[RMDB]
RNA sequence: GGGAACGACUCGAGUAGAGUCGAAAAACUUUCGGAAACUUGUGAAUGUGGUGUCAAAAAAGGCAUAAAUCAAAUUCUUUUGCAGCCAUUACUGCCCUUGAAUUUGGUUUCUUUGGCGUAGGCGUUGCCCGCUCAGAUUAUUCGUAAUCUGAGCGGGAAAAGAAACAACAACAACAAC
Reactivity to 2A3 in 0.01 (KOAc 150mM, MgCl2 10mM, bicine 150mM(pH8.5), 24C), signal-to-noise 2, nucleotides 027 to 126: a000c030u100u070u040c020g000g000a030a030a030c010u040u040g060u090g050a200a070u060g040u020g010g010u000g020u090c010a020a000a020a070a070a120g030g070c030a040u080a140a000a010u020c050a040a000a040u020u030c010u030u040u010u000g000c020a000g050c030c090a120u180u200a040c040u000g010c000c010c000u000u010g030a060a010u080u010u030g040g000u010u000u040c040u010u000u080g000g000c000g040u060a080g020g000c040g040u020u050g050
Reactivity to DMS in 0.01 (KOAc 150mM, MgCl2 10mM, bicine 150mM(pH8.5), 24C), signal-to-noise 1, nucleotides 027 to 126: a040c090u000u030u000c040g020g010a030a050a070c060u000u020g000u010g020a040a040u020g060u020g000g000u010g060u010c040a000a030a060a000a070a090g000g040c100a020u000a020a020a020u000c000a010a010a050u000u010c000u000u010u000u010g010c030a020g000c160c190a150u010u030a120c000u030g000c000c060c020u000u000g040a010a000u000u010u000g000g000u000u000u000c040u000u020u000g020g000c080g040u000a090g000g000c080g060u010u000g000